Chemical mapping of a 177-nucleotide RNA with DMS and 2A3. The reactions ran in a buffer of 150 mM KOAc, 10 mM MgCl2 and 150 mM bicine (pH 8.5), at 24 C. Source: RMDB library OK1LIB, as collected in RNAgym. DMS (dimethyl sulfate) methylates the pairing face of unpaired adenines and cytosines. Values are in units of 0.01, from 0 to 300, in steps of 10. The 2A3 profile rests on 703 reads. The DMS profile rests on 1,151 reads.
[RMDB]
RNA sequence: GGGAACGACUCGAGUAGAGUCGAAAAUAUACAUGAGAAGUCGGCACAACUCCCGACUCGCGGUGAGCGAUGCAGCGUAGCGCGAGCUACGCAGCUGCUGUGCGGACGGCUAGCAAAAGCUAGCCCAGAUGCCUCGUCAGUUCGCUGACGAGGCAUCAAAAGAAACAACAACAACAAC
Reactivity to DMS in 0.01 (KOAc 150mM, MgCl2 10mM, bicine 150mM(pH8.5), 24C), signal-to-noise 1, nucleotides 027 to 126: u040a000u100a000c090a220u030g010a190g000a150a130g020u000c000g000g010c000a030c000a020a110c100u000c000c000c010g030a300c130u030c020g000c020g030g000u050g010a170g000c130g020a020u030g020c000a020g000c000g000u080a000g030c010g140c230g000a270g000c000u000a040c020g000c010a020g000c240u000g000c090u010g000u000g000c000g030g000a030c050g000g000c000u000a000g000c010a130a030a030a060g000c000u000a030g000c090c000c070a090
Reactivity to 2A3 in 0.01 (KOAc 150mM, MgCl2 10mM, bicine 150mM(pH8.5), 24C), signal-to-noise 1, nucleotides 027 to 126: u200a010u060a060c180a120u240g040a100g050a260a040g000u000c000g100g020c000a020c000a090a110c020u000c000c000c000g070a010c000u010c000g010c070g070g050u300g080a010g000c040g060a060u030g000c000a000g020c030g020u000a000g010c030g000c010g050a030g000c000u000a000c010g000c000a000g000c000u000g040c020u000g070u010g050c050g000g000a050c080g040g000c000u000a000g020c000a000a170a300a000g010c000u000a000g000c000c000c000a010